Description:
Structure probing data (2A3 and DMS) for a 177-nucleotide construct. Conditions: 150 mM KOAc, 10 mM MgCl2 and 150 mM bicine (pH 8.5), 24 C. The DMS profile rests on 2,183 reads. The data come from the RNA Mapping Database (RMDB), library 15KREP. For 2A3, 1,187 sequencing reads were counted.

RNA sequence: GGGAACGACUCGAGUAGAGUCGAAAAAAAGGCUUAUCAAGAGAGGUGGAGGGACUGGCCCGAUGAAACCCGGCAGCCAGAAAUGGUGCCAAUUCCUGCAGCGGAAACGUUGAAAGAUGACCCGAAACUAAAGCUAAAAGUUCGCUUUUAGCUUUAGAAAAGAAACAACAACAACAAC
Reactivity to 2A3 in 0.01 (KOAc 150mM, MgCl2 10mM, bicine 150mM(pH8.5), 24C), signal-to-noise 1, nucleotides 027 to 126: a000a000a040g060g000c040u070u110a120u180c060a070a030g070a000g020a040g070g010u050g000g060a030g000g000g000a000c010u030g000g030c000c000c000g090a110u040g010a030a020a030c030c040c000g000g020c030a010g090c000c020a000g000a020a010a000u060g000g020u030g010c000c060a020a020u050u010c010c010u060g060c020a000g020c010g030g000a050a020a030c060g030u020u050g030a090a090a000g030a010u030g040a030c000c010c010g000a010a000a000
Reactivity to DMS in 0.01 (KOAc 150mM, MgCl2 10mM, bicine 150mM(pH8.5), 24C), signal-to-noise 3, nucleotides 027 to 126: a060a050a040g010g000c040u000u000a100u000c050a110a080g000a090g000a140g020g020u010g000g000a070g010g000g000a130c090u000g000g000c010c030c010g000a040u010g010a080a100a080c120c060c030g010g010c090a040g040c000c010a010g010a090a080a090u000g000g010u010g010c020c020a070a110u000u000c000c010u000g000c050a050g010c020g010g010a060a050a090c050g020u000u010g000a080a040a060g000a090u000g000a080c020c030c010g010a100a050a150